The record gives the reactivity of an RNA of 177 nucleotides to DMS and 2A3. It was measured as part of the RMDB library OK2TST. The DMS profile rests on 2,229 reads.
RNA sequence: GGGAACGACUCGAGUAGAGUCGAAAAACUAAUGGUACUGCUGUACCUACCUUGUUUAAACUUAAAGGUGGUGCACCUGUUAAGAGGGUAGCUUUUGGUGAUGAUGAGAUCCAUGAAGUUGCUGCUGACCGUCGAUUAUGUUCGCAUAAUCGACGGUAAAAGAAACAACAACAACAAC
Reactivity to DMS in 0.01 (KOAc 150mM, MgCl2 10mM, bicine 150mM(pH8.5), 24C), signal-to-noise 3, nucleotides 027 to 126: a100c060u000a090a100u010g010g020u000a020c040u000g000c250u010g010u000a020c020c000u010a050c060c060u000u020g010u000u010u010a070a080a270c140u000u010a090a020a030g010g020u000g000g000u010g030c040a020c030c020u010g010u000u020a050a090g010a040g030g020g010u000a020g010c040u010u000u000u000g000g010u010g000a170u010g010a160u010g010a140g000a110u000c020c000a070u010g020a020a030g010u000u000g010c010u000g020c050u000g010
Reactivity to 2A3 in 0.01 (KOAc 150mM, MgCl2 10mM, bicine 150mM(pH8.5), 24C), signal-to-noise 2, nucleotides 027 to 126: a000c080u100a040a040u170g100g020u090a070c040u090g090c030u060g010u020a010c000c010u040a060c010c000u000u000g050u130u240u190a200a280a130c030u030u140a040a000a000g030g010u000g040g010u080g010c000a030c030c010u100g060u140u060a080a020g060a040g090g030g020u010a010g000c000u050u030u040u030g070g000u070g000a040u000g030a040u120g130a090g010a070u020c010c000a010u040g010a030a000g020u030u000g000c040u040g000c010u020g060